[RMDB]
RNA sequence: GGGAACGACUCGAGUAGAGUCGAAAAGAGGGUCCUCUGGGUCGCAUCCAGGCCCGGGCGCUGCAGAAAGUUGUAAAAGGAGAUAAGCCCGCUAAAUAUGAGCCGCGACAGGAACCUGUAGGCAAACACCCUACGUUAUAUUCGUAUAACGUAGGGUAAAAGAAACAACAACAACAAC
Reactivity to 2A3 in 0.01 (KOAc 150mM, MgCl2 10mM, bicine 150mM(pH8.5), 24C), signal-to-noise 2, nucleotides 027 to 126: g120a030g010g060g030u050c010c000u020c020u070g040g030g030u060c040g000c040a060u040c010c010a050g000g010c000c000c040g000g000g010c060g000c010u080g050c000a000g110a060a140a070g040u140u100g020u220a040a090a090a160g050g010a090g000a110u080a120a000g020c030c000c010g060c020u040a000a150a110u210a030u150g040a010g010c020c000g040c020g020a040c000a020g050g040a040a070c010c000u020g050u040a020g000g050c000a030a030a020c070
Reactivity to DMS in 0.01 (KOAc 150mM, MgCl2 10mM, bicine 150mM(pH8.5), 24C), signal-to-noise 5, nucleotides 027 to 126: g010a150g000g000g010u010c030c030u010c020u010g000g020g010u010c040g010c120a130u040c080c100a170g000g010c020c020c020g000g010g010c030g000c030u000g010c080a110g010a100a050a090g010u010u000g000u010a030a060a150a120g000g010a090g000a110u010a070a120g010c000c020c010g000c090u040a070a080a120u010a070u010g010a160g020c000c030g020c080g020a070c100a070g010g000a060a060c070c010u010g020u030a090g010g000c060a090a100a060c190
Structure probing data (2A3 and DMS) for a 177-nucleotide construct. The reactions ran in a buffer of 150 mM KOAc, 10 mM MgCl2 and 150 mM bicine (pH 8.5), at 24 C. DMS adducts were read by reverse transcription with MarathonRT. The 2A3 profile rests on 1,153 reads.